[RMDB]
RNA sequence: GGGAACGACUCGAGUAGAGUCGAAAAUGAUAUGGAUAGCAUAAUUCCCGUUGUGGACAUGCUCGAUUGGGUCGGAAACGACCUAAAGAGCAACAGCCAUGACGGGAAUUAUGCUAUCCUAAGUCUACAAUGCCUACAUGUUCGCAUGUAGGCAUUGAAAAGAAACAACAACAACAAC
Reactivity to DMS in 0.01 (KOAc 150mM, MgCl2 10mM, bicine 150mM(pH8.5), 24C), signal-to-noise 3, nucleotides 027 to 126: u000g010a010u010a300u010g010g000a000u000a000g000c000a000u000a020a010u000u000c000c000c000g010u000u000g010u000g000g000a040c120a300u000g000c000u000c000g010a280u010u010g010g010g020u000c000g010g000a150a100a300c020g000a010c000c000u000a000a040a240g000a020g000c000a040a050c300a150g010c000c000a000u010g000a000c000g000g000g000a010a000u010u000a000u000g010c000u000a000u000c000c000u010a010a060g010u000c020u000a210